The data come from the RNA Mapping Database (RMDB), library M2PK90.
Structure probing data (2A3 and DMS) for a 177-nucleotide construct.
For 2A3, 3,549 sequencing reads were counted.
DMS adducts were read by reverse transcription with MarathonRT.
RNA sequence: GGGAACGACUCGAGUAGAGUCGAAAAAUUGAUUUGAGACGUCCCCUUGCAGUGUUAACUUGGCUCUCAUGAACCUCUUUGAUCUUCCACAAAGGGUAGGCUACGGGUGAAACCUCUUAGGCUAAAAUGUUCAAACUAUAUUCGUAUAGUUUGAACAAAAAGAAACAACAACAACAAC
Reactivity to 2A3 in 0.01 (KOAc 150mM, MgCl2 10mM, bicine 150mM(pH8.5), 24C), signal-to-noise 2, nucleotides 027 to 126: a000u090u090g030a020u070u020u150g040a010g010a000c020g040u020c000c000c000c000u020u090g000c030a030g000u020g040u230u080a080a060c030u030u060g030g020c010u010c000u000c050a040u120g040a040a060c010c000u030c010u030u040u030g020a050u020c040u120u000c040c010a060c020a080a040a010g060g000g000u040a030g030g000c000u030a020c070g030g000g020u050g050a090a030a030c000c010u020c010u050u060a020g020g010c020u020a050a050a030a100
Reactivity to DMS in 0.01 (KOAc 150mM, MgCl2 10mM, bicine 150mM(pH8.5), 24C), signal-to-noise 6, nucleotides 027 to 126: a070u000u010g000a090u000u000u010g010a070g000a100c050g000u000c020c010c010c040u000u000g000c060a040g020u000g010u010u010a070a060c070u000u000g010g000c020u000c020u000c040a090u000g000a090a110c100c010u000c010u000u000u000g010a060u000c060u000u010c040c070a140c050a050a050a050g000g000g010u000a040g010g000c040u000a050c160g000g000g010u000g010a080a080a120c070c010u000c060u010u000a080g010g010c050u000a030a040a070a100